[RMDB]
RNA sequence: GGGAACGACUCGAGUAGAGUCGAAAAGCGUACGCAAAAAUGUGAUCUUGCUUGUAAAUACAAUUUUGAGAGGUUAAUUAAUUACAAGUAGUGCUAUUUUUGUCCCUCUCUGCAAUAGACAGCCAAAAUCCGUAUAUCCUUUCGAGGAUAUACGGAUAAAAGAAACAACAACAACAAC
Reactivity to DMS in 0.01 (KOAc 150mM, MgCl2 10mM, bicine 150mM(pH8.5), 24C), signal-to-noise 4, nucleotides 027 to 126: g010c080g010u010a060c200g010c010a010a030a020a050a030u000g010u000g000a080u010c060u030u000g030c010u000u010g000u000a010a020a060u030a080c130a050a060u010u000u010u020g000a050g010a030g010g010u010u010a020a090u040u030a080a050u010u010a030c010a010a010g000u000a040g010u020g020c030u010a020u000u000u000u000u000g000u020c080c000c010u000c000u000c000u000g000c100a060a060u000a090g000a100c130a070g010c050c070a060a050a070
Reactivity to 2A3 in 0.01 (KOAc 150mM, MgCl2 10mM, bicine 150mM(pH8.5), 24C), signal-to-noise 7, nucleotides 027 to 126: g040c030g050u090a020c050g000c020a030a000a020a010a040u290g100u050g260a300u050c020u020u030g000c000u010u000g000u000a010a040a020u240a110c140a070a090u050u040u040u090g040a040g000a000g020g080u050u100a040a040u090u080a050a060u030u030a050c010a020a000g010u020a030g100u040g130c010u020a040u020u030u010u020u010g030u010c000c010c000u000c000u000c000u000g000c000a020a020u020a110g080a060c050a040g060c030c000a060a070a000
Chemical mapping of a 177-nucleotide RNA with DMS and 2A3. DMS adducts were read by reverse transcription with MarathonRT. For DMS, 9,063 sequencing reads were counted. It was measured as part of the RMDB library OK1LIB. For 2A3, 6,233 sequencing reads were counted. The RNA was probed in 150 mM KOAc, 10 mM MgCl2 and 150 mM bicine (pH 8.5) at 24 C. 2A3 adducts were read by reverse transcription with SuperScript II with manganese.